Chemical mapping of a 177-nucleotide RNA with 2A3 and DMS.
For DMS the reverse transcriptase was MarathonRT.
The RNA was probed in 150 mM KOAc, 10 mM MgCl2 and 150 mM bicine (pH 8.5) at 24 C.
Values are in units of 0.01, from 0 to 300, in steps of 10.
[RMDB]
RNA sequence: GGGAACGACUCGAGUAGAGUCGAAAACAAUUGUAGAUAUCAUAAAGAUAGUAGCAAGCAUUAACAUUUCAUAUAUGUUUGUGUGUAUAGUCUUUUUACUCUUAAGAAAAAUAAUUGCUAUGCGAUAACAAGGACGUAAUUUCGAUUACGUCCUUGUAAAAGAAACAACAACAACAAC
Reactivity to 2A3 in 0.01 (KOAc 150mM, MgCl2 10mM, bicine 150mM(pH8.5), 24C), signal-to-noise 1, nucleotides 027 to 126: c000a050a060u160u070g080u080a050g060a110u120a040u190c030a020u070a260a010a050g010a000u060a040g080u000a050g000c000a030a030g000c000a000u000u070a000a020c070a020u110u230u230c110a060u130a050u030a010u230g000u010u040u010g040u000g000u000g030u000a060u040a180g030u100c010u040u090u030u040u130a100c050u030c020u110u160a030a130g090a050a070a030a000a020u160a060a030u010u010g030c000u020a050u080g000c020g020a030u030a080
Reactivity to DMS in 0.01 (KOAc 150mM, MgCl2 10mM, bicine 150mM(pH8.5), 24C), signal-to-noise 2, nucleotides 027 to 126: c060a100a100u000u000g000u020a070g000a050u010a120u020c050a080u010a100a070a110g000a050u000a100g020u000a080g020c030a040a100g000c000a010u000u010a050a080c040a040u000u000u020c210a060u010a070u000a040u000g000u000u000u010g000u000g020u000g020u030a080u010a070g000u000c000u000u000u010u010u000a060c080u000c100u000u000a060a060g000a020a060a030a150a040u010a030a060u000u010g000c020u000a010u000g000c100g000a200u000a060